[RMDB]
RNA sequence: GGGAACGACUCGAGUAGAGUCGAAAAGCAGAACGGGAUGUGCACGUAGAGCGACAGGGGGUGUCCGGCCUUCCGGCUGUCGCGCAGGGCGUGCAACUGGUCGAACGGGCCGAUGCCUUCGUGGAAACGUGCGUGCACGUUUCGACGUGCACGCACGAAAAGAAACAACAACAACAAC
Reactivity to 2A3 in 0.01 (KOAc 150mM, MgCl2 10mM, bicine 150mM(pH8.5), 24C), signal-to-noise 1, nucleotides 027 to 126: g080c080a020g030a080a010c030g010g050g020a060u070g050u040g040c000a000c030g030u070a030g000a000g190c050g020a010c040a110g080g000g010g010g030u000g050u070c090c000g000g000c010c000u120u110c030c010g030g030c050u070g010u070c000g000c000g030c020a060g050g220g000c020g000u000g000c000a000a010c010u030g000g030u050c040g000a100a080c050g010g030g000c020c010g040a020u080g000c000c000u050u070c080g170u050g060g030a080a070a020
Reactivity to DMS in 0.01 (KOAc 150mM, MgCl2 10mM, bicine 150mM(pH8.5), 24C), signal-to-noise 2, nucleotides 027 to 126: g010c050a070g010a090a050c070g000g000g010a110u000g020u010g000c020a040c040g010u000a070g010a160g000c020g000a100c050a070g010g030g000g000g020u000g000u010c040c080g020g010c110c080u020u000c140c020g010g010c000u000g010u000c020g020c000g010c070a110g000g030g000c070g020u020g000c020a030a020c070u030g000g000u000c040g000a080a090c210g000g000g000c030c020g000a040u020g000c020c030u000u000c060g010u010g020g010a050a070a140